[RMDB]
RNA sequence: GGGAACGACUCGAGUAGAGUCGAAAAACCUCAGUCUUCGGACUGAGGUGAGCGGAGCAUGCUGGCCGUGGGAACUCCUCCUUGGUGACAAGGGCCCACGGGGUGCGGCACGCUUCGGCGUGCCGAACACAGGACCAACUUUCGAGUUGGUCCUGUGAAAAGAAACAACAACAACAAC
Reactivity to DMS in 0.01 (KOAc 150mM, MgCl2 10mM, bicine 150mM(pH8.5), 24C), signal-to-noise 2, nucleotides 027 to 126: a020c010c000u010c000a010g010u000c000u000u010c180g020g000a020c000u010g010a000g000g010u000g000a050g010c060g010g020a110g020c100a080u030g020c050u010g020g000c010c000g000u000g000g000g000a090a050c050u010c080c060u000c000c000u010u010g000g010u010g000a180c030a020a000g000g010g010c020c010c010a010c000g020g010g010g020u010g020c010g010g000c000a010c000g020c010u000u010c090g020g010c000g020u000g000c010c000g020a030a080
Reactivity to 2A3 in 0.01 (KOAc 150mM, MgCl2 10mM, bicine 150mM(pH8.5), 24C), signal-to-noise 1, nucleotides 027 to 126: a000c000c000u010c000a010g000u000c010u000u150c220g170g000a000c000u000g000a010g000g000u000g000a020g030c040g070g030a080g090c080a090u110g040c060u050g110g100c020c010g040u020g000g000g000a050a070c050u050c060c000u090c000c000u030u030g000g040u080g050a060c020a010a000g010g000g030c000c000c010a000c000g000g000g010g010u120g070c020g000g000c000a030c000g000c000u020u030c160g020g050c010g000u000g000c060c000g030a050a010
The data come from the RNA Mapping Database (RMDB), library M2PK50.
This 177-nucleotide RNA was probed chemically with DMS and 2A3.
DMS adducts were read by reverse transcription with MarathonRT.